[RMDB]
RNA sequence: GGGAACGACUCGAGUAGAGUCGAAAAAGUGCCAACUUAAAGCGCACUGAUCUAAGUCUUGCUGCUUAAGCGCUUAGAUCUGUCGGUAUAGGGCUUGUCUUCGGCCCUGUAUCCGGCAUGGUUUUAGAGGACUUGCCGCGUGUUUGCCGCUUGCGUGCUUUUAGCCUGAGUUCGCUCAGGCUAAAAGAAAAGAAACAACAACAACAAC
Reactivity to DMS in 0.01 (KOAc 150mM, MgCl2 10mM, bicine 150mM(pH8.5), 24C), signal-to-noise 1, nucleotides 027 to 156: a030g000u000g030c030c000a070a130c070u000u020a090a070a100g000c030g020c010a040c010u000g010a000u010c020u000a040a050g000u010c060u010u000g020c030u000g000c200u010u020a080a050g030c020g010c020u000u000a020g010a010u000c020u000g030u010c000g030g030u010a030u000a030g030g010g000c000u010u000g010u000c170u010u000c050g000g020c000c000c010u010g000u010a000u000c000c020g000g020c020a020u010g020g020u010u000u000u000a140g030a110g020g000a060c020u000u000g000c030c000g040c040g040u000g020u010u010u010g030c030c030g010c050u000u000g000c020g020u010g030
Reactivity to 2A3 in 0.01 (KOAc 150mM, MgCl2 10mM, bicine 150mM(pH8.5), 24C), signal-to-noise 4, nucleotides 027 to 156: a010g020u010g010c020c010a060a060c130u150u220a170a130a000g050c060g000c030a020c030u020g010a000u000c010u000a000a010g060u020c090u220u220g020c030u020g030c010u200u280a080a020g000c020g020c020u010u000a000g000a000u010c020u000g000u010c010g000g000u010a010u040a000g040g010g000c030u080u090g050u100c050u070u090c020g000g010c000c000c010u000g000u000a050u080c000c040g000g000c000a040u060g000g020u050u120u050u150a030g020a040g020g030a010c000u010u060g010c020c010g020c040g030u090g040u040u080u090g050c030c010g050c070u020u060g030c020g030u070g010